[RMDB]
RNA sequence: GGGAACGACUCGAGUAGAGUCGAAAAGCAGCGCGUCUUUGUGGAGCGGACGAAAGCUCUGGCUUCGGGCCCGCUCUCAAGGGUAGCAGACGAUCGAGAGAGGGUCCUCUCGAGAGCUGGGCCAUACGCGGGUUUGUAGGUUCGCCUGCGAACCCGCAAAAGAAACAACAACAACAAC
Reactivity to DMS in 0.01 (KOAc 150mM, MgCl2 10mM, bicine 150mM(pH8.5), 24C), signal-to-noise 5, nucleotides 027 to 126: g010c040a050g010c030g020c030g000u010c020u010u010u000g000u050g000g010a040g020c030g020g010a050c010g000a060a030a070g010c020u000c160u050g000g010c020u000u000c030g010g000g000c110c010c000g020c010u010c000u000c000a020a030g010g000g020u020a080g030c080a100g000a110c110g020a120u010c020g000a060g010a040g000a140g010g010g000u020c050c000u000c010u010c000g000a020g000a110g000c010u000g010g000g010c020c020a060u020a060c190
Reactivity to 2A3 in 0.01 (KOAc 150mM, MgCl2 10mM, bicine 150mM(pH8.5), 24C), signal-to-noise 8, nucleotides 027 to 126: g020c020a010g010c010g000c000g020u000c020u000u050u050g060u110g020g010a000g000c000g010g010a010c010g060a120a030a010g010c020u030c080u140g180g000c000u030u020c020g030g010g000c000c010c010g000c000u000c000u000c000a010a020g030g010g010u160a040g050c030a010g030a050c040g040a050u050c030g000a010g010a000g010a060g080g080g050u050c010c000u000c000u000c000g020a010g000a000g000c020u080g000g030g000c000c000a040u050a080c060

Chemical mapping of a 177-nucleotide RNA with DMS and 2A3.
Conditions: 150 mM KOAc, 10 mM MgCl2 and 150 mM bicine (pH 8.5), 24 C.
The data come from the RNA Mapping Database (RMDB), library OK1LIB.
For 2A3, 16,883 sequencing reads were counted.
Values cover nucleotides 27 to 126.